[RMDB]
The record gives the reactivity of an RNA of 177 nucleotides to DMS and 2A3. For 2A3 the reverse transcriptase was SuperScript II with manganese. The reactions ran in a buffer of 150 mM KOAc, 10 mM MgCl2 and 150 mM bicine (pH 8.5), at 24 C. It was measured as part of the RMDB library OK1LIB. High 2A3 reactivity points to a flexible backbone, as in loops and unpaired stretches. DMS adducts were read by reverse transcription with MarathonRT.
RNA sequence: GGGAACGACUCGAGUAGAGUCGAAAAGUGCGGGAAAAGUUAAAAGAGGGGACUGGGAUUAAAGCAUACUUUGUCAAAGAAAAUGCAAUGAAUGCAUUAGAAGUUGACUUAACGCCACACAACCCACCAACUAUCGGCCAUUCGUGGCCGAUAGUUGAAAAGAAACAACAACAACAAC
Reactivity to DMS in 0.01 (KOAc 150mM, MgCl2 10mM, bicine 150mM(pH8.5), 24C), signal-to-noise 1, nucleotides 027 to 126: g000u000g000c000g000g060g000a190a110a080a090g000u010u000a100a050a240a140g000a070g010g000g000g000a090c290u000g010g010g000a140u000u100a100a100a060g000c060a050u000a120c090u000u000u050g000u030c000a120a000a000g010a070a090a060a010u000g050c000a040a050u000g060a170a120u000g030c050a000u070u000a000g000a190a070g000u000u000g020a020c000u000u000a010a050c060g010c000c020a000c150a020c170a040a000c000c030c010a030c210
Reactivity to 2A3 in 0.01 (KOAc 150mM, MgCl2 10mM, bicine 150mM(pH8.5), 24C), signal-to-noise 2, nucleotides 027 to 126: g000u020g020c040g000g010g030a000a180a080a050g090u070u150a060a100a060a060g060a040g000g030g000g020a040c090u000g020g000g000a040u050u230a040a040a000g060c000a010u030a200c040u060u060u010g110u040c020a030a030a030g080a030a100a060a010u000g000c000a000a110u170g010a170a140u010g110c000a020u000u000a030g060a110a060g150u080u050g020a000c000u000u070a010a000c000g080c000c000a010c000a020c000a060a050c000c000c000a030c080